[RMDB]
RNA sequence: GGGAACGACUCGAGUAGAGUCGAAAACUCACUCACUACGGUGAGUGAGAAUCUUAAGGCUCAAUAAAGCUUGCCUUGAGGUCCCUCAAGCAGAUAUAGACUGAAACAUUUAGUAUUCACAAGCAGGGAGCAACGGCUCGAGUACGCUCGAGCCGAACGCGACCCCUAUAUUCGUAUAGGGGUCGCGAAAAGAAACAACAACAACAAC
Reactivity to 2A3 in 0.01 (KOAc 150mM, MgCl2 10mM, bicine 150mM(pH8.5), 24C), signal-to-noise 1, nucleotides 027 to 156: c000u000c000a000c000u010c000a020c000u040a040c210g090g020u000g000a010g000u000g000a000g000a080a030u010c010u000u020a040a000g040g000c000u020c050a000a300u200a270a110a040g160c120u080u060g000c030c000u000u000g000a010g050g030u000c000c000c000u030c030a050a030g040c020a010g030a070u150a050u110a190g130a120c040u050g010a060a160a000c000a040u120u190u120a070g020u060a040u080u280c060a040c040a050a020g060c020a060g010g000g080a160g010c060a030a010c010g000g000c000u000c000g000a040g000u020a030c290g020c040u000c000g000a000g000c000c000g010a000a000
Conditions: 150 mM KOAc, 10 mM MgCl2 and 150 mM bicine (pH 8.5), 24 C. An RNA of 207 nucleotides, treated with 2A3 and read out base by base. For 2A3 the reverse transcriptase was SuperScript II with manganese. The 2A3 profile rests on 407 reads. Source: RMDB library OK3TST, as collected in RNAgym.